[RMDB]
RNA sequence: GGGAACGACUCGAGUAGAGUCGAAAAGUAAACCUGUGAUAUUCUCCGGCACUGUACCCCCGGCCAUACAUCCAAGAAAAUUCGCAUCUGUGACAGUGGAAGACACUCCGGUGGUCCAACCUGAAAGGUAGUGCUACGAUUUCGAUCGUAGCACUACAAAAGAAACAACAACAACAAC
Reactivity to DMS in 0.01 (KOAc 150mM, MgCl2 10mM, bicine 150mM(pH8.5), 24C), signal-to-noise 1, nucleotides 027 to 126: g000u000a090a190a130c020c050u000g000u010g010a150u030a130u010u000c010u010c050c090g010g040c000a040c030u000g000u010a190c050c010c010c040c090g000g000c050c010a060u000a010c050a030u000c040c020a170a110g040a070a060a010a100u000u020c120g010c040a070u000c050u000g010u000g030a060c140a110g010u000g010g000a100a060g010a060c050a050c040u010c060c060g010g010u010g030g020u010c060c030a080a090c080c010u020g010a050a040a090g000
Structure probing data (DMS) for a 177-nucleotide construct. It was measured as part of the RMDB library OK2TST.